[RMDB]
RNA sequence: GGGAACGACUCGAGUAGAGUCGAAAAACGUCAGAUACGCCGACCAGUGACAAACUUAUCCGACUGGCACCCAAAGCCGUCUGUCGCAGCGGGUGUAAGAUUUUUUAAGACAGACUUGCCGCCGGUAGCCCGAUCAGGGGCAUCACCGGAUGGCGAGGCAUACAUAUAGGUUCGCCUAUAUGUAUGCAAAAGAAACAACAACAACAAC
Reactivity to 2A3 in 0.01 (KOAc 150mM, MgCl2 10mM, bicine 150mM(pH8.5), 24C), signal-to-noise 7, nucleotides 027 to 156: a000c040g020u010c010a010g020a080u090a090c050g060c070c060g070a090c040c020a030g020u050g100a090c090a090a160a020c090u120u100a050u070c020c020g030a020c030u030g030g000c010a000c010c000c000a010a010a000g010c010c030g020u000c000u000g000u010c010g000c000a000g000c020g010g020g000u000g000u010a020a010g000a020u100u100u090u100u130u270a050a010g010a000c010a000g000a000c000u010u060g000c000c010g000c000c000g000g000u010a010g000c000c010c010g080a160u240c140a120g000g000g020g000c010a030u040c020a000c000c000g070g020a110u060g000g000c000g000a020g010
Reactivity to DMS in 0.01 (KOAc 150mM, MgCl2 10mM, bicine 150mM(pH8.5), 24C), signal-to-noise 2, nucleotides 027 to 156: a060c090g000u000c010a030g020a070u000a020c010g020c030c030g020a110c020c000a180g000u020g020a070c000a030a090a090c070u000u000a090u000c030c030g020a070c000u010g020g000c030a060c000c020c010a020a300a220g020c040c040g030u000c020u020g010u000c010g010c020a070g010c300g020g000g000u000g020u000a020a090g000a050u000u000u010u000u010u050a060a090g020a040c010a050g010a120c030u000u000g030c010c010g020c000c010g000g000u020a290g010c000c010c000g000a220u000c210a150g030g000g020g030c010a040u000c100a040c010c000g000g000a050u010g020g000c020g000a020g010
Chemical mapping of a 207-nucleotide RNA with 2A3 and DMS. Values cover nucleotides 27 to 156. For 2A3, 13,186 sequencing reads were counted. For DMS, 4,365 sequencing reads were counted. The RNA was probed in 150 mM KOAc, 10 mM MgCl2 and 150 mM bicine (pH 8.5) at 24 C. 2A3 adducts were read by reverse transcription with SuperScript II with manganese.